[RMDB]
RNA sequence: GGGAACGACUCGAGUAGAGUCGAAAACGAAGGACUUUCGAGUCCUUCGACUUACCGAGAAAGAUCCUCGGUAUAAAUCUGGAACCCUUGGAAACAAGGGUAUGAACGGAAUCUUCGGAUUCCGUAAGAUGCCCUUACGUUUCGACGUAAGGGCAUCAAAAGAAACAACAACAACAAC
Reactivity to DMS in 0.01 (KOAc 150mM, MgCl2 10mM, bicine 150mM(pH8.5), 24C), signal-to-noise 1, nucleotides 027 to 126: c020g010a040a030g010g010a010c000u000u010u000c150g060a010g020u000c000c010u000u000c000g000a060c060u000u000a000c000c000g000a010g020a140a130a180g000a200u000c020c010u000c010g000g000u010a010u030a010a040a110u000c110u020g000g000a100a050c010c000c020u000u010g000g000a160a070a190c000a010a000g010g020g020u000a000u000g000a120a040c000g000g000a000a000u000c000u000u010c270g040g010a020u000u000c000c020g010u010a020a040
Reactivity to 2A3 in 0.01 (KOAc 150mM, MgCl2 10mM, bicine 150mM(pH8.5), 24C), signal-to-noise 1, nucleotides 027 to 126: c010g000a000a000g000g030a000c030u030u110u170c210g040a020g020u040c000c000u010u000c000g010a000c000u010u010a000c000c000g000a000g010a020a230a000g110a040u080c000c000u000c010g000g080u010a000u030a000a010a020u010c080u180g080g100a030a040c000c000c020u000u000g010g010a070a030a020c000a000a000g000g010g010u000a010u020g010a000a000c010g010g000a010a000u010c010u030u050c220g070g000a000u000u000c000c000g010u000a010a040
Structure probing data (DMS and 2A3) for a 177-nucleotide construct. DMS adducts were read by reverse transcription with MarathonRT. Conditions: 150 mM KOAc, 10 mM MgCl2 and 150 mM bicine (pH 8.5), 24 C.